The data come from the RNA Mapping Database (RMDB), library OK1LIB. Structure probing data (DMS and 2A3) for a 177-nucleotide construct. Values cover nucleotides 27 to 126. Conditions: 150 mM KOAc, 10 mM MgCl2 and 150 mM bicine (pH 8.5), 24 C. The 2A3 profile rests on 25,318 reads.
RNA sequence: GGGAACGACUCGAGUAGAGUCGAAAACGACGCCCAUAUUUCCGGCUUUAACAUUGUAAGGAAUUCCUCUGUACGCUACCGUGGGGCGACCUGGAAUCGUGCCACCUAGUAUCAGUCAGGAGCAUAGGUUUAUUUUAAUAUUCGUAUUAAAAUAAACAAAAGAAACAACAACAACAAC
Reactivity to DMS in 0.01 (KOAc 150mM, MgCl2 10mM, bicine 150mM(pH8.5), 24C), signal-to-noise 7, nucleotides 027 to 126: c100g010a100c120g020c020c010c020a080u030a070u020u020u000c030c010g000g000c070u010u010u010a070a120c120a120u030u000g010u020a090a120g000g010a100a090u020u000c000c010u000c030u020g010u020a040c110g000c000u000a020c170c250g010u000g000g010g000g000c030g000a030c060c060u050g010g020a160a210u000c030g010u000g000c010c020a020c010c070u000a030g010u000a070u010c060a030g000u010c090a050g010g000a080g010c120a070u020a060g010
Reactivity to 2A3 in 0.01 (KOAc 150mM, MgCl2 10mM, bicine 150mM(pH8.5), 24C), signal-to-noise 9, nucleotides 027 to 126: c040g080a010c050g030c000c010c020a020u050a030u060u020u000c010c000g030g030c040u070u050u050a120a040c050a120u100u140g090u180a080a090g030g020a040a010u050u010c000c000u020c000u020g030u040a020c160g000c020u020a030c040c050g010u020g000g010g010g000c000g010a010c000c070u120g100g080a070a060u020c010g010u030g200c010c000a020c000c010u010a020g010u030a060u110c010a010g090u030c040a010g010g010a030g020c030a070u110a110g090
For 2A3 the reverse transcriptase was SuperScript II with manganese.